Structure probing data (2A3 and DMS) for a 177-nucleotide construct. For DMS the reverse transcriptase was MarathonRT. Conditions: 150 mM KOAc, 10 mM MgCl2 and 150 mM bicine (pH 8.5), 24 C.
RNA sequence: GGGAACGACUCGAGUAGAGUCGAAAAAGGAAGACUGGCUUGCAUCUUCAUUGGAAUGGUCUUCUUCUCUUAUCUGAGAGAGAGUGAUCAACAAGGCUUCACAUACAUAAAAAGAACAUGUGGAGACCGGCCACACAUAAUUCGUUAUGUGUGGCCGAAAAGAAACAACAACAACAAC
Reactivity to 2A3 in 0.01 (KOAc 150mM, MgCl2 10mM, bicine 150mM(pH8.5), 24C), signal-to-noise 3, nucleotides 027 to 126: a000g120g010a030a000g000a020c040u030g110g070c120u070u030g010c000a040u020c050u020u030c000a140u050u130g050g030a100a110u060g010g010u020c000u070u020c000u280u060c000u000c000u040u120a300u140c220u220g000a020g010a000g020a000g000a010g040u140g010a000u020c000a000a120c020a110a060g050g020c000u000u000c000a010c020a010u070a020c020a050u200a100a140a050a040a010g080a070a020c070a060u020g000u000g030g000a040g050a110c020
Reactivity to DMS in 0.01 (KOAc 150mM, MgCl2 10mM, bicine 150mM(pH8.5), 24C), signal-to-noise 1, nucleotides 027 to 126: a120g010g030a020a070g000a000c110u010g000g000c120u030u020g000c150a300u000c000u000u000c070a080u040u000g010g000a120a200u000g050g000u000c000u000u000c000u070u070c000u030c000u000u000a240u050c180u070g000a100g110a020g000a030g000a010g050u000g000a020u010c000a050a110c010a060a020g000g000c010u000u000c000a000c010a010u000a000c220a080u000a050a100a070a150a050g050a080a140c300a000u060g000u000g030g010a050g050a030c140